[RMDB]
RNA sequence: GGGAACGACUCGAGUAGAGUCGAAAAUUAGGUAAUUUAAUUUUACUUGCAUGUAUGUGCAAGUUGGUGAUGUACAUGUACAGCUUCUUUUAAAAAUGGAUUGGGACCUAACAAUGAAAACAUGCAGUAUGUUCAUGGAUUUCGAUCCAUGAACAUAAAAAGAAACAACAACAACAAC
Reactivity to DMS in 0.01 (KOAc 150mM, MgCl2 10mM, bicine 150mM(pH8.5), 24C), signal-to-noise 3, nucleotides 027 to 126: u000u000a040g000g010u020a090a030u020u020u000a060a030u000u010u000u010a060c000u000u000g000c010a000u010g010u010a040u020g010u000g000c020a050a050g000u000u000g030g020u000g010a050u000g010u000a040c040a080u020g010u000a050c110a050g020c050u000u010c030u000u000u000u000a000a010a040a040a090u010g000g010a070u000u010g020g010g000a070c040c030u020a050a030c170a060a050u010g000a080a060a060a070c080a040u010g030c190a110g000
Reactivity to 2A3 in 0.01 (KOAc 150mM, MgCl2 10mM, bicine 150mM(pH8.5), 24C), signal-to-noise 1, nucleotides 027 to 126: u100u030a050g000g000u050a050a130u060u050u100a080a040u000u030u060u010a020c000u020u000g010c010a020u050g090u300a080u180g030u000g060c010a000a040g050u000u080g000g000u000g030a060u040g030u020a030c040a070u110g010u030a000c000a000g020c030u130u000c070u000u220u020u070a070a080a030a030a040u100g090g010a040u010u020g060g060g040a000c000c000u030a040a030c030a080a090u200g090a080a130a060a000c020a010u090g000c000a000g080